[RMDB]
RNA sequence: GGGAACGACUCGAGUAGAGUCGAAAACGUGGCCCGGACCGUCACCGCGAGGCUGCACGCCGAGGACCUGCCCAUUGCUCAGGAGGAAUGGCUGAUGGCGCCCGCCAUUGCCUACGGCGCCAGCGGCGUAUCAAGCCGAGUUCGCUCGGCUUGAUACAAAAGAAACAACAACAACAAC
Reactivity to 2A3 in 0.01 (KOAc 150mM, MgCl2 10mM, bicine 150mM(pH8.5), 24C), signal-to-noise 2, nucleotides 027 to 126: c030g050u050g020g010c010c000c000g000g020a090c110c040g020u040c020a010c040c020g030c000g060a070g090g040c040u070g020c040a010c050g020c030c000g010a110g000g010a130c000c020u070g000c020c010c000a070u060u170g040c040u060c060a040g060g050a020g010g030a120a090u090g050g000c010u030g030a080u030g010g020c020g020c040c030c000g030c020c040a140u070u160g050c010c010u050a060c040g010g000c000g010c000c000a000g000c010g040g000c040
Reactivity to DMS in 0.01 (KOAc 150mM, MgCl2 10mM, bicine 150mM(pH8.5), 24C), signal-to-noise 4, nucleotides 027 to 126: c110g000u000g010g000c020c020c020g020g000a120c090c050g000u010c050a070c040c040g010c120g020a120g020g010c260u010g000c110a090c080g010c050c040g010a150g000g000a080c090c020u000g000c030c020c030a130u000u000g000c030u000c040a110g020g000a090g000g000a090a100u010g020g010c000u010g010a070u010g000g000c010g000c080c040c120g000c050c080a100u010u010g000c050c050u010a110c170g000g000c010g010c070c010a020g010c010g000g010c070

Background: This 177-nucleotide RNA was probed chemically with 2A3 and DMS. The data come from the RNA Mapping Database (RMDB), library OK2TRN. 2A3 adducts were read by reverse transcription with SuperScript II with manganese. For DMS, 3,865 sequencing reads were counted. Values are in units of 0.01, from 0 to 300, in steps of 10.